[RMDB]
RNA sequence: GGGAACGACUCGAGUAGAGUCGAAAAAGCCCUAGCCAAAUACUGUAUUUUUUAUCAACAUUUGGUUGAAAAACAUCUGUGUAUUAGUAAACCUGUGUUGUUCAAGAGUCCGCUGUGCUUUGCUGAAGAUACUUAAGGGGUUCGCCCCUUAAGUAUCAAAAGAAACAACAACAACAAC
Reactivity to DMS in 0.01 (KOAc 150mM, MgCl2 10mM, bicine 150mM(pH8.5), 24C), signal-to-noise 1, nucleotides 027 to 126: a140g000c040c000c030u010a060g010c050c040a040a060a080u000a040c040u000g000u000a000u000u000u000u000u030u010a070u030c000a050a040c010a060u000u010u010g010g000u000u000g000a050a140a140a080a040c060a040u010c160u030g020u010g000u000a050u000u010a070g000u000a080a010a010c030c000u000g020u000g000u000u000g000u000u000c120a080a060g010a070g000u020c140c120g020c060u000g000u000g010c100u000u000u010g000c010u010g010a110a070
The record gives the reactivity of an RNA of 177 nucleotides to DMS.